An RNA of 177 nucleotides, treated with 2A3 and DMS and read out base by base.
DMS adducts were read by reverse transcription with MarathonRT.
For 2A3, 3,762 sequencing reads were counted.
RNA sequence: GGGAACGACUCGAGUAGAGUCGAAAAUGCACAACGUCUUCAUGCCCUCCCUGCGCCACAAGGGGCAGUAUGACAGGGUGCACUGCGGCGCGGCGUGCCCUCCGUCCAAGCUGGUAUUCUUGCUGGAACUGACGAUACUGUUCGCAGUAUCGUCAGUAAAAGAAACAACAACAACAAC
Reactivity to 2A3 in 0.01 (KOAc 150mM, MgCl2 10mM, bicine 150mM(pH8.5), 24C), signal-to-noise 3, nucleotides 027 to 126: u070g040c030a020c030a070a120c060g050u010c020u110u070c040a140u080g010c000c000c000u050c020c000c000u090g020c080g020c000c000a090c030a130a090g040g000g000g000c010a020g010u080a040u170g040a020c020a030g100g000g000u020g000c000a010c020u090g020c020g120g000c030g000c000g030g000c020g030u030g000c010c000c000u020c010c010g040u010c030c000a010a020g040c040u030g060g000u050a100u200u040c040u030u070g020c010u030g030g050a060
Reactivity to DMS in 0.01 (KOAc 150mM, MgCl2 10mM, bicine 150mM(pH8.5), 24C), signal-to-noise 3, nucleotides 027 to 126: u000g000c020a060c060a070a070c110g000u000c010u010u010c110a090u000g010c000c010c000u000c040c030c020u000g010c080g020c030c040a080c120a130a080g020g010g000g020c030a030g010u000a060u010g010a060c060a100g010g010g020u000g000c010a040c080u000g020c060g010g000c050g040c050g030g010c060g010u000g000c030c030c000u010c010c040g010u000c010c110a050a090g000c030u010g010g010u010a080u000u010c040u000u000g000c030u000g010g010a140